The data come from the RNA Mapping Database (RMDB), library OK2TST. The record gives the reactivity of an RNA of 177 nucleotides to DMS and 2A3.
[RMDB]
RNA sequence: GGGAACGACUCGAGUAGAGUCGAAAAGGUGCACGCGGGCAACGCUCGCCUGGUCCUGCGUCGGGAGACGGUCGACGAUUUGCUGAGUUUGGAAGUGAGGUGACCCGUGCCCGGUGACGAAAAGCCGACCGCAAACAUAGUUCGCUAUGUUUGCGGUAAAAGAAACAACAACAACAAC
Reactivity to DMS in 0.01 (KOAc 150mM, MgCl2 10mM, bicine 150mM(pH8.5), 24C), signal-to-noise 2, nucleotides 027 to 126: g010g030u010g030c030a000c110g030c040g020g030g030c040a100a060c040g030c300u000c020g010c010c000u010g010g020u000c010c050u000g020c040g010u010c010g030g010g000a090g000a060c050g000g000u000c100g000a150c050g020a180u010u000u010g020c050u000g000a180g000u000u000u020g010g010a150a050g010u030g010a050g020g000u010g000a030c100c100c040g030u010g010c010c000c010g000g000u020g000a050c080g000a110a070a100a150g010c030c020g010
Reactivity to 2A3 in 0.01 (KOAc 150mM, MgCl2 10mM, bicine 150mM(pH8.5), 24C), signal-to-noise 2, nucleotides 027 to 126: g170g000u210g000c060a000c000g260c020g040g020g020c100a120a080c060g020c030u000c000g000c000c000u050g040g030u040c010c010u050g050c010g050u010c000g010g030g020a080g070a030c000g030g020u100c040g040a110c000g050a160u020u040u140g050c010u040g070a060g090u070u250u160g170g000a120a120g030u270g300a050g120g040u020g000a030c020c030c000g010u010g000c000c000c000g000g020u010g000a060c050g070a030a040a000a020g020c000c010g040

The reactions ran in a buffer of 150 mM KOAc, 10 mM MgCl2 and 150 mM bicine (pH 8.5), at 24 C.